[RMDB]
RNA sequence: GGGAACGACUCGAGUAGAGUCGAAAACUAGAGAUAGGGUCUCACUCUCACUCUGGAGUGAGUGGUGCAACCACAGCUUAGUGCAGCCUCGACCUUCAGGCUCAAGUGAUCCUCCUUCCUUGGCCUCCCAAAGUACUGGGAUUACAGGUGUGAGCCACCCUAUACCCCUAUUCGUAGGGGUAUAGGGAAAAGAAACAACAACAACAAC
Reactivity to DMS in 0.01 (KOAc 150mM, MgCl2 10mM, bicine 150mM(pH8.5), 24C), signal-to-noise 1, nucleotides 027 to 156: c060u000a090g010a030g030a190u010a030g010g010g010u010c030u010c030a070c010u030c000u000c040a060c040u020c040u000g030g010a070g040u000g010a010g010u000g010g000u000g000c040a140a100c020c010a110c040a100g010c080u000u010a080g010u010g010c000a130g000c010c010u000c050g000a070c060c040u010u010c050a080g040g020c030u030c020a030a110g000u000g030a050u010c060c000u010c050c010u010u000c000c030u010u010g010g010c010c060u000c010c030c020a020a040a120g010u010a050c060u010g010g000g010a050u020u000a000c020a080g010g010u000g010u010g000a110g020c000c000a130
Reactivity to 2A3 in 0.01 (KOAc 150mM, MgCl2 10mM, bicine 150mM(pH8.5), 24C), signal-to-noise 2, nucleotides 027 to 156: c020u030a020g030a000g010a120u110a130g030g010g040u040c010u000c030a030c020u020c000u050c040a060c070u200c160u200g080g020a030g000u010g010a040g010u020g010g000u080g010c060a060a080c010c030a060c040a040g030c020u080u070a060g010u080g130c060a020g040c000c010u060c060g050a090c000c000u070u110c070a040g010g000c050u040c130a020a040g010u010g100a020u030c000c040u040c010c060u100u070c000c010u040u050g020g020c000c030u080c020c010c010a020a090a010g060u050a090c100u040g000g010g020a040u060u130a060c090a070g030g000u050g030u030g070a030g000c010c030a020